[RMDB]
RNA sequence: GGGAACGACUCGAGUAGAGUCGAAAAAGAUAUGGAUCACGCCUCGGAUAGAGCGAAGAACAAGUUUAAAUAAUCGGAAACGAUUAUUACAACUUGGGAGCUUGCGGAGUGCGUGAUCCUAAGUCAAGUGAAAGUUUAACUUCGGUUAAACUUUCACAAAAGAAACAACAACAACAAC
Reactivity to 2A3 in 0.01 (KOAc 150mM, MgCl2 10mM, bicine 150mM(pH8.5), 24C), signal-to-noise 1, nucleotides 027 to 126: a000g100a100u110a070u130g000g000a000u000c000a000c010g000c010c000u010c050g190g010a080u250a220g160a020g060c040g210a290a000g040a040a040c030a000a000g000u110u020u070a190a090a020u010a000a010u030c010g010g050a040a140a010c040g000a000u030u030a000u020u030a040c050a010a000c000u000u020g040g000g000a020g000c010u030u030g000c200g250g030a010g040u260g000c000g000u010g000a000u000c000c000u000a010a000g010u000c040a080a210
Reactivity to DMS in 0.01 (KOAc 150mM, MgCl2 10mM, bicine 150mM(pH8.5), 24C), signal-to-noise 1, nucleotides 027 to 126: a110g000a010u000a300u000g000g030a020u000c000a000c010g000c000c000u000c000g020g050a080u010a130g000a000g000c020g020a140a140g030a130a210c020a010a010g010u000u010u000a160a080a030u000a000a000u000c000g000g000a150a170a240c000g000a020u000u000a000u000u000a160c240a050a000c000u000u000g000g030g010a110g000c000u000u000g020c100g020g000a030g000u010g080c020g010u000g000a000u020c000c000u000a000a140g000u020c070a090a160